[RMDB]
RNA sequence: GGGAACGACUCGAGUAGAGUCGAAAAGAUAUGGAGCCCAGGUGCCAGCGAGAGGGUCGGAAACGACCCUGUCGCGGUAAACCUGAGGCUCCUAAGUCUAAAAGAUCGCCAGUUCGCUGGCGAUCAAGAGAUUUUAUAUGUUCGCAUAUAAAAUCUCAAAAGAAACAACAACAACAAC
Reactivity to DMS in 0.01 (KOAc 150mM, MgCl2 10mM, bicine 150mM(pH8.5), 24C), signal-to-noise 2, nucleotides 027 to 126: g020a050u000a300u010g000g000a020g000c010c000c010a000g010g020u000g000c090c020a150g030c000g000a020g010a030g010g000g020u020c010g030g000a060a100a240c000g020a020c010c000c000u010g010u000c000g050c000g000g010u000a050a100a070c010c000u000g000a130g030g000c000u000c000c000u000a000a030g010u000c020u000a100a150a160a170g000a000u000c010g040c000c000a000g000u010u010c290g010c000u000g020g000c010g010a000u000c000a020a090

Chemical mapping of a 177-nucleotide RNA with DMS. Values cover nucleotides 27 to 126. For DMS the reverse transcriptase was MarathonRT. The reactions ran in a buffer of 150 mM KOAc, 10 mM MgCl2 and 150 mM bicine (pH 8.5), at 24 C.